This 177-nucleotide RNA was probed chemically with 2A3 and DMS. For 2A3, 952 sequencing reads were counted.
[RMDB]
RNA sequence: GGGAACGACUCGAGUAGAGUCGAAAACUUUUGGACAUGUUCCGCACGGAACAGGAAGGAAAAGGCUAUAACAGAUCCGAGAUGCCCUCAGAUGCCCUGGGCUGCACGCGCAAUACAAUAGCAGGUAGUACUCACUGCUCUUCGGAGCAGUGAGUACAAAAGAAACAACAACAACAAC
Reactivity to 2A3 in 0.01 (KOAc 150mM, MgCl2 10mM, bicine 150mM(pH8.5), 24C), signal-to-noise 2, nucleotides 027 to 126: c010u110u050u010u050g130g050a110c070a090u050g000u010u000c010c010g050c150a150c170g000g070a020a010c030a010g030g040a040a030g100g040a030a030a010a030g010g000c010u040a020u010a260a030c010a000g060a150u000c030c000g030a010g030a040u150g000c000c000c000u030c000a030g040a040u050g030c000c050c000u000g000g090g000c000u000g010c010a010c050g220c000g020c060a040a120u080a130c010a020a170u150a030g040c040a040g050g080u120a000
Reactivity to DMS in 0.01 (KOAc 150mM, MgCl2 10mM, bicine 150mM(pH8.5), 24C), signal-to-noise 1, nucleotides 027 to 126: c030u000u000u010u030g040g000a140c070a120u020g000u000u000c030c000g010c260a120c230g000g000a040a040c040a060g000g000a100a080g000g000a080a020a130a010g000g030c020u000a130u000a040a140c200a050g000a090u000c000c040g020a060g000a060u010g050c010c010c020u020c000a170g000a060u000g000c020c000c000u060g010g070g030c000u000g000c000a080c080g000c000g000c030a140a080u000a120c160a000a000u000a010g000c040a080g000g040u000a120
The reactions ran in a buffer of 150 mM KOAc, 10 mM MgCl2 and 150 mM bicine (pH 8.5), at 24 C.